Structure probing data (DMS and 2A3) for a 177-nucleotide construct. Values are in units of 0.01, from 0 to 300, in steps of 10. It was measured as part of the RMDB libraries RFM100 and RFMREP. 2A3 adducts were read by reverse transcription with SuperScript II with manganese. The reactions ran in a buffer of 150 mM KOAc, 10 mM MgCl2 and 150 mM bicine (pH 8.5), at 24 C. For 2A3, 1,377 sequencing reads were counted.
RNA sequence: GGGAACGACUCGAGUAGAGUCGAAAAAAGCCGAGGCCGAGAGGCGUAGGCGAUGGACAUCAGGUUAAUAAUCCUGAGCUCGCAACCCUUAAACUGGGGGGACGCAUGAGAAAAGAUGACUAGGUUAUCUAUAACCCACGUUCGCGUGGGUUAUAGAAAAAGAAACAACAACAACAAC
Reactivity to DMS in 0.01 (KOAc 150mM, MgCl2 10mM, bicine 150mM(pH8.5), 24C), signal-to-noise 4, nucleotides 027 to 126: a070a100g000c010c000g000a160g000g000c000c000g000a230g010a200g010g030c000g020u000a300g010g000c000g010a110u000g000g000a120c090a140u010c010a010g000g010u010u010a140a100u000a220a110u050c020c010u000g000a040g000c030u000c040g000c060a080a280c000c000c010u010u040a070a090a080c130u030g020g000g000g000g010g000a090c230g000c050a080u030g010a040g000a060a040a070a050g010a100u000g000a090c050u020a070g010g010u000u040a110
Reactivity to 2A3 in 0.01 (KOAc 150mM, MgCl2 10mM, bicine 150mM(pH8.5), 24C), signal-to-noise 3, nucleotides 027 to 126: a010a010g010c000c000g010a040g020g010c000c000g050a040g010a070g040g000c010g000u000a000g000g000c000g000a000u030g020g020a000c010a110u000c000a030g070g000u040u090a130a080u100a010a060u090c000c000u030g020a020g070c020u020c010g070c040a060a070c000c000c000u030u100a300a270a110c180u170g000g000g000g000g010g010a050c140g040c040a020u200g010a010g060a050a020a020a010g120a070u190g000a020c070u050a020g050g130u080u120a020